Chemical mapping of a 207-nucleotide RNA with 2A3. 2A3 adducts were read by reverse transcription with SuperScript II with manganese.

RNA sequence: GGGAACGACUCGAGUAGAGUCGAAAAUGACUGUUGGGCCCUAGCAUCCCCAACAGUCUAAUGAUGUAGUGGUGUGGAGUACGCGAGAGCGUACUCAGCAUCCGAGAGGAUGCGAUUCCGACCCACAUUAUUGCAUCUAAGGGUCGGUUGCUAGGGUGAGUGCAUGACCGUUCGCGGUCAUGCACUCAAAAGAAACAACAACAACAAC
Reactivity to 2A3 in 0.01 (KOAc 150mM, MgCl2 10mM, bicine 150mM(pH8.5), 24C), signal-to-noise 1, nucleotides 027 to 156: u120g000a020c000u000g000u000u000g010g020g000c000c000c000u020a010g010c000a160u230c010c000c000c000a000a000c000a000g000u000c000u000a010a020u090g060a000u030g010u060a040g020u020g080g000u020g020u030g030g010a020g000u010a000c000g000c000g020a030g000a000g130c000g000u000a000c010u000c000a000g020c010a000u000c000c000g010a010g010a020g020g000a000u020g010c030g010a020u170u100c020c020g040a050c020c000c000a020c020a010u020u040a060u050u030g000c000a010u000c030u040a040a130g100g000g000u070c070g000g050u030u010g000c000u000a000g000g000g010u020